[RMDB]
RNA sequence: GGGAACGACUCGAGUAGAGUCGAAAAGAUCACGAGGUCAGGAGAUUGAGACGAUCCUGGCCAACAUGGUGAAACCCCAUCUCUACAAAAAUGCAAAAAUUAGCUGAGUGUGGUGGCAUGUGCCUGUAAUCCCAGCUACUCUUCAAAAAAAAAAAUACUACUCCUGCGUAUUCGUACGCAGGAGUAGAAAAGAAACAACAACAACAAC
Reactivity to 2A3 in 0.01 (KOAc 150mM, MgCl2 10mM, bicine 150mM(pH8.5), 24C), signal-to-noise 2, nucleotides 027 to 156: g010a010u040c010a020c130g170a030g010g010u010c000a000g020g000a030g000a020u110u160g030a090g000a080c090g000a000u000c000c000u010g000g000c000c000a000a000c000a000u040g010g000u130g020a080a070a040c050c010c010c000a010u000c010u030c010u060a060c040a000a090a070a040a040u110g010c020a020a000a030a090a140u200u070a040g000c050u010g040a040g050u050g010u010g040g040u020g020g000c090a070u130g030u090g080c010c000u000g000u060a030a070u110c020c000c030a000g000c030u070a120c090u090c000u120u190c140a070a040a010a000a000a000a060a060a000a020a050u300a030

This 207-nucleotide RNA was probed chemically with 2A3.
Conditions: 150 mM KOAc, 10 mM MgCl2 and 150 mM bicine (pH 8.5), 24 C.
2A3 adducts were read by reverse transcription with SuperScript II with manganese.